Background: Chemical mapping of a 207-nucleotide RNA with 2A3. 2A3 adducts were read by reverse transcription with SuperScript II with manganese. As a SHAPE reagent, 2A3 marks flexible, mostly unpaired nucleotides at the ribose 2'-OH.
[RMDB]
RNA sequence: GGGAACGACUCGAGUAGAGUCGAAAACGAACAGAGUGCAAUUAAGGUCGCAAUGCAGGGCAUGGGCGUCGAUGCAGCAAAACUGGAUGCUUACGGUAUCUGGACUGUUAAGCAGAUGACUCAAUUACUGAAUCGCCAGUAUGAGCAGGCAUACCCGACUGAUGUCACCAUUCGUGGUGACAUCAGUAAAAGAAACAACAACAACAAC
Reactivity to 2A3 in 0.01 (KOAc 150mM, MgCl2 10mM, bicine 150mM(pH8.5), 24C), signal-to-noise 1, nucleotides 027 to 156: c040g000a010a000c020a000g170a020g120u060g020c110a010a190u160u210a220a000g070g000u100c110g030c010a020a050u040g000c010a050g060g080g000c130a100u150g020g000g060c050g020u050c010g040a070u090g000c010a010g070c000a020a000a080a080c080u020g050g030a070u000g000c020u150u150a060c160g010g000u010a030u080c010u240g000g120a020c020u000g020u070u050a140a000g000c090a000g000a210u040g080a210c020u000c200a120a100u110u090a000c000u040g030a020a020u040c130g030c090c000a070g000u000a040u070g000a000g010c020a010g040g020c000a060u050a050c000c000c000g000